[RMDB]
RNA sequence: GGGAACGACUCGAGUAGAGUCGAAAACGGCCUUUAGUGCAGAUCUUGGUGGUAGUAGCAAAUAUUCAAAUGCGAACUUUGAAGACUGAAGUGGAGAAAGGUUCCGUGUGAUCAGUAAUUGGACACGAUAUACAGACCUCUUCGGAGGUCUGUAUAUAAAAGAAACAACAACAACAAC
Reactivity to 2A3 in 0.01 (KOAc 150mM, MgCl2 10mM, bicine 150mM(pH8.5), 24C), signal-to-noise 4, nucleotides 027 to 126: c020g030g010c000c000u110u070u090a160g010u190g100c030a040g050a170u000c010u070u110g040g000u030g060g000u090a040g000u040a030g020c020a010a080a070u190a100u090u200c040a040a090a060u090g010c020g040a010a030c040u060u060u110g040a050a000g050a010c020u020g030a100a010g120u110g090g040a040g080a100a010a020g120g020u080u070c020c020g020u000g010u020g060a100u050c000a030g090u130a210a090u070u130g010g010a020c000a000c050g010
Reactivity to DMS in 0.01 (KOAc 150mM, MgCl2 10mM, bicine 150mM(pH8.5), 24C), signal-to-noise 4, nucleotides 027 to 126: c090g000g010c060c000u000u010u010a030g020u020g010c010a070g000a080u010c040u010u010g020g040u000g000g000u000a040g020u010a080g000c060a040a090a100u010a100u050u020c150a040a060a060u020g010c110g000a080a100c110u000u000u000g010a030a050g010a060c040u000g010a060a080g020u010g020g000a070g000a060a090a060g010g000u010u000c010c010g000u000g020u000g010a100u010c030a050g000u010a080a090u030u030g000g000a040c040a030c050g020

Chemical mapping of a 177-nucleotide RNA with 2A3 and DMS. As a SHAPE reagent, 2A3 marks flexible, mostly unpaired nucleotides at the ribose 2'-OH. For 2A3 the reverse transcriptase was SuperScript II with manganese.